The data come from the RNA Mapping Database (RMDB), library TTRINS.
The record gives the reactivity of an RNA of 177 nucleotides to DMS.
RNA sequence: GGGAACGACUCGAGUAGAGUCGAAAAGAUAUGGAAUCAUGGGAGGCAUGCUCACCGUUGAAAAUACGAUGUCGGAAACGACAUCGUAUUGGAGGUGAACAUGCCGAAGAACAUGAUUCCUAAGUCAGUUAACACUUGGGUUCGCCCAAGUGUUAACAAAAGAAACAACAACAACAAC
Reactivity to DMS in 0.01 (KOAc 150mM, MgCl2 10mM, bicine 150mM(pH8.5), 24C), signal-to-noise 1, nucleotides 027 to 126: g000a020u000a300u000g000g020a000a040u000c000a000u000g000g010g030a300g000g010c010a000u000g000c010u000c000a010c030c000g040u010u020g050a160a160a030a010u000a000c000g050a010u000g010u000c000g000g000a150a060a170c010g030a000c000a000u000c000g010u030a000u000u000g020g020a130g010g000u000g000a000a020c000a020u010g000c020c010g000a020a040g060a170a190c010a000u030g000a010u000u000c000c000u010a010a130g040u050c030a090
The reactions ran in a buffer of 150 mM KOAc, 10 mM MgCl2 and 150 mM bicine (pH 8.5), at 24 C. Reactivities are rounded to 0.1 and cut off at 0 and 3. For DMS the reverse transcriptase was MarathonRT.